[RMDB]
The record gives the reactivity of an RNA of 207 nucleotides to 2A3 and DMS. The reactions ran in a buffer of 150 mM KOAc, 10 mM MgCl2 and 150 mM bicine (pH 8.5), at 24 C. For DMS the reverse transcriptase was MarathonRT. High 2A3 reactivity points to a flexible backbone, as in loops and unpaired stretches.

RNA sequence: GGGAACGACUCGAGUAGAGUCGAAAAUUGCUUUACACAGACCACAGCUUCUUGUCAUUUGAUACUGCAUGUGGUUUAAUUGGUUGUCCACAUGGUGGUCAGUGGCACGGAGCCCAUCUCCUCUGGCAGCUUGCAAUUGUGUUGUCAAAGCAUGGUAAAAAUGAUAAUCAUUCGUGAUUAUCAUUUUAAAAGAAACAACAACAACAAC
Reactivity to 2A3 in 0.01 (KOAc 150mM, MgCl2 10mM, bicine 150mM(pH8.5), 24C), signal-to-noise 7, nucleotides 027 to 156: u090u050g030c020u050u080u170a050c060a010c020a050g100a060c030c040a030c040a060g010c000u030u020c010u040u030g010u010c010a080u150u130u260g060a090u170a300c020u130g190c000a060u000g000u000g020g000u070u060u060a030a030u040u110g120g020u050u070g020u030c000c000a010c000a020u050g030g040u030g010g010u060c020a010g000u010g000g000c010a010c030g000g010a010g010c010c010c000a070u040c040u020c020c000u040c020u020g010g010c000a010g020c020u030u120g030c030a030a130u080u040g020u010g000u050u010g010u020c000a010a020a020g030c060a050u090g060g010u150a060
Reactivity to DMS in 0.01 (KOAc 150mM, MgCl2 10mM, bicine 150mM(pH8.5), 24C), signal-to-noise 6, nucleotides 027 to 156: u000u000g010c020u000u000u000a100c070a100c070a120g010a080c010c020a080c110a100g010c010u000u000c020u000u000g020u000c030a150u000u010u010g030a040u000a040c070u010g030c020a070u000g030u000g010g020u000u000u000a050a160u010u010g020g010u000u000g010u010c010c010a020c030a050u000g020g020u000g020g020u000c020a050g030u000g000g020c000a050c070g010g010a100g020c020c020c050a100u000c040u010c030c010u000c020u000g010g010c010a070g010c040u000u000g020c050a080a100u000u010g030u000g010u000u000g010u000c020a060a060a090g020c070a090u010g020g010u010a040